An RNA of 177 nucleotides, treated with DMS and 2A3 and read out base by base.
For DMS, 23,253 sequencing reads were counted.
DMS adducts were read by reverse transcription with MarathonRT.
RNA sequence: GGGAACGACUCGAGUAGAGUCGAAAACAGCGACUCGUCGCUGCGGCCGUGCACCAACUGCAGAAGCUGCACGGCAAACUCCACAUCUCGCAAGCCGCCACUUCCGAGUUUGAGCUCGCGGCCGCGAGGACGCUAAUACUUUCGAGUAUUAGCGUCCAAAAGAAACAACAACAACAAC
Reactivity to DMS in 0.01 (KOAc 150mM, MgCl2 10mM, bicine 150mM(pH8.5), 24C), signal-to-noise 9, nucleotides 027 to 126: c020a020g010c010g000a030c040u010c300g010u000c020g020c010u000g000c050g010g010c000c010g030u000g010c020a040c090c050a080a160c080u000g010c220a110g000a110a140g010c220u000g010c020a010c000g010g000c010a010a030a060c090u000c010c030a110c220a100u000c070u000c010g000c020a100a160g010c010c010g010c070c170a080c130u000u000c070c050g000a060g010u000u010u000g000a090g010c050u010c110g010c010g010g010c000c140g000c020g000a040
Reactivity to 2A3 in 0.01 (KOAc 150mM, MgCl2 10mM, bicine 150mM(pH8.5), 24C), signal-to-noise 9, nucleotides 027 to 126: c010a000g010c000g020a010c030u100c210g070u020c010g090c010u020g010c050g080g000c000c000g000u010g000c000a020c020c030a160a160c100u230g060c110a070g050a240a020g040c080u020g000c010a010c010g000g000c010a000a020a020c030u020c020c020a100c010a180u080c040u030c040g010c030a060a050g000c000c000g030c030c040a100c060u160u060c050c050g040a020g050u050u150u260g110a040g010c030u030c060g000c010g000g000c000c000g000c000g000a020
The reactions ran in a buffer of 150 mM KOAc, 10 mM MgCl2 and 150 mM bicine (pH 8.5), at 24 C.